Structure probing data (DMS and 2A3) for a 177-nucleotide construct.
DMS adducts were read by reverse transcription with MarathonRT.

RNA sequence: GGGAACGACUCGAGUAGAGUCGAAAAAAGAUUUCCGGCUGCAUCAAUGCCUGCGGCCAUCAUCAUGUCGGCCAUAUCGGCAUUCUGGGCGUGGAGAAGAAGGGUGAGGAGCUUUACCAGAUCACGAAUUUUAUCCUACGUUCGCGUAGGAUAAAAUAAAAGAAACAACAACAACAAC
Reactivity to DMS in 0.01 (KOAc 150mM, MgCl2 10mM, bicine 150mM(pH8.5), 24C), signal-to-noise 4, nucleotides 027 to 126: a070a080g000a190u010u000u000c020c020g020g000c020u010g020c020a030u000c110a050a050u010g000c050c030u000g020c110g000g010c010c010a060u010c090a080u010c190a080u010g010u000c040g030g000c050c040a060u000a080u010c110g010g010c020a040u000u000c090u010g010g000g020c070g030u000g000g010a060g010a060a080g020a070a060g010g010g020u000g010a070g020g000a090g010c080u000u010u010a130c030c040a070g000a080u000c070a050c150g030a110
Reactivity to 2A3 in 0.01 (KOAc 150mM, MgCl2 10mM, bicine 150mM(pH8.5), 24C), signal-to-noise 1, nucleotides 027 to 126: a000a000g050a030u020u020u020c030c010g030g000c040u060g060c010a040u020c060a040a160u080g060c020c030u080g040c040g000g050c030c000a040u080c000a050u050c020a020u150g050u080c100g020g000c020c020a000u040a100u160c070g020g040c010a020u070u000c040u110g030g000g030c040g070u100g000g000a110g010a080a030g060a030a000g050g000g000u070g010a100g050g010a050g020c010u050u000u010a040c030c000a020g010a070u070c040a020c130g060a040